The record gives the reactivity of an RNA of 177 nucleotides to DMS and 2A3. For DMS the reverse transcriptase was MarathonRT. 2A3 adducts were read by reverse transcription with SuperScript II with manganese.
RNA sequence: GGGAACGACUCGAGUAGAGUCGAAAAUCAUACUGGGUAGUAGAUUUUGGGAGUCACGGUCUCUACUAUCUAGUAUGAGCACUACUGGUAGACUAGACUGUGAUUCCCAAAGUCUACCAGUGGUGUAGUAACUGGUUGUAUUCGUACAAUCAGUUACAAAAGAAACAACAACAACAAC
Reactivity to DMS in 0.01 (KOAc 150mM, MgCl2 10mM, bicine 150mM(pH8.5), 24C), signal-to-noise 7, nucleotides 027 to 126: u020c020a040u010a010c000u010g010g010g010u020a080g030u010a000g000a020u000u000u010u010g010g000g010a080g010u020c040a040c030g000g000u000c020u000c070u000a070c000u000a000u000c030u020a000g010u000a020u020g000a080g010c130a050c090u000a010c020u000g000g000u000a000g000a180c160u010a070g010a050c060u010g010u010g000a070u000u000c000c000c000a010a020a010g000u000c000u000a010c000c000a010g010u000g000g020u000g000u010a120
Reactivity to 2A3 in 0.01 (KOAc 150mM, MgCl2 10mM, bicine 150mM(pH8.5), 24C), signal-to-noise 9, nucleotides 027 to 126: u050c000a010u010a020c000u010g010g020g020u050a050g050u010a000g040a040u030u020u040u070g060g020g020a070g060u090c030a020c050g030g020u010c010u010c010u040a110c000u000a010u010c000u000a000g000u000a010u030g000a010g010c020a010c010u010a000c000u000g000g000u000a000g010a050c050u010a010g010a030c030u040g050u050g050a090u040u040c000c000c000a010a010a000g000u000c000u000a000c000c000a000g000u010g000g020u020g010u020a050